[RMDB]
RNA sequence: GGGAACGACUCGAGUAGAGUCGAAAACGAUCCAGCGUCGCACCGGUAACGCCGAGCAGGUGACACGCCAGGCCACUGUCCGAGACCACCAGUUUCGGUCGGCGAAUCACCUUGCGGCUCAGGUUGGCACUUAGCCACGGUUCGCCGUGGCUAAGUGAAAAGAAACAACAACAACAAC
Reactivity to DMS in 0.01 (KOAc 150mM, MgCl2 10mM, bicine 150mM(pH8.5), 24C), signal-to-noise 1, nucleotides 027 to 126: c040g040a090u000c080c000a030g000c150g040u010c130g030c080a160c020c000g090g030u030a030a080c110g000c000c020g000a090g000c070a000g010g000u000g020a030c220a170c020g030c020c010a150g000g010c000c010a090c130u000g000u020c010c020g010a040g000a060c000c080a120c120c150a170g010u000u010u000c060g000g000u000c010g000g050c010g010a160a110u060c100a000c020c010u000u010g050c000g000g080c030u010c050a210g000g000u040u050g010g020
Reactivity to 2A3 in 0.01 (KOAc 150mM, MgCl2 10mM, bicine 150mM(pH8.5), 24C), signal-to-noise 2, nucleotides 027 to 126: c020g030a050u020c010c000a010g000c030g000u040c000g000c040a040c000c020g000g080u090a130a040c080g000c000c000g050a050g080c050a000g010g000u020g010a030c030a030c160g020c000c000a080g060g030c000c000a040c030u060g050u110c040c110g040a020g070a060c060c030a100c050c040a100g000u000u050u050c000g000g020u000c000g000g000c000g010a000a050u000c000a010c020c000u020u120g020c000g010g010c040u060c010a020g030g040u010u050g030g000

The record gives the reactivity of an RNA of 177 nucleotides to DMS and 2A3. The RNA was probed in 150 mM KOAc, 10 mM MgCl2 and 150 mM bicine (pH 8.5) at 24 C. The 2A3 profile rests on 1,982 reads. For 2A3 the reverse transcriptase was SuperScript II with manganese.